Structure probing data (2A3 and DMS) for a 207-nucleotide construct.
The 2A3 profile rests on 514 reads.
Source: RMDB library OK3TST, as collected in RNAgym.
DMS adducts were read by reverse transcription with MarathonRT.
2A3 adducts were read by reverse transcription with SuperScript II with manganese.
[RMDB]
RNA sequence: GGGAACGACUCGAGUAGAGUCGAAAAGCGUUUUAGAAGUGCACCUAUAAGGAAAAUGAGCACCACGGUGAUCGCUACUGUCCCGUAGCGAAUCUGCGUCAGGAGGCUGAAGUAAUGGUAGAUUCUCUGCCAGGCAGGACCUAUGGAUUCUGGUGAAAUUAGCCAGAGUUUUCGAACUCUGGCUAAUAAAAGAAACAACAACAACAAC
Reactivity to 2A3 in 0.01 (KOAc 150mM, MgCl2 10mM, bicine 150mM(pH8.5), 24C), signal-to-noise 1, nucleotides 027 to 156: g040c040g030u070u050u070u040a110g000a160a000g010u050g040c020a040c010c030u020a060u090a230a100g130g040a020a060a070a090u110g080a010g000c040a040c030c000a050c020g080g020u050g000a010u050c000g030c010u030a040c010u030g050u030c000c000c000g000u000a010g010c000g000a060a060u020c030u170g050c030g030u050c040a040g020g100a030g040g000c070u030g040a030a000g040u100a000a070u100g010g020u020a010g020a170u210u020c060u050c010u050g000c000c030a050g010g000c020a010g000g020a030c000c000u040a030u100g040g040a060u110u000c000u060g010g100u060g000a070a140
Reactivity to DMS in 0.01 (KOAc 150mM, MgCl2 10mM, bicine 150mM(pH8.5), 24C), signal-to-noise 1, nucleotides 027 to 156: g010c040g000u000u000u000u000a040g020a000a100g020u000g000c070a160c070c040u000a160u010a090a110g030g010a070a040a070a080u010g020a160g000c060a010c010c050a040c000g040g010u000g020a110u000c010g030c010u010a020c050u000g020u000c040c060c090g000u000a060g010c000g000a020a120u010c030u020g030c060g040u000c070a100g050g010a080g050g000c030u010g000a030a090g030u010a060a100u000g030g040u000a010g020a130u000u000c110u000c030u000g010c010c020a040g010g040c080a080g000g000a120c040c040u000a030u000g010g000a080u000u010c000u000g000g030u020g000a090a110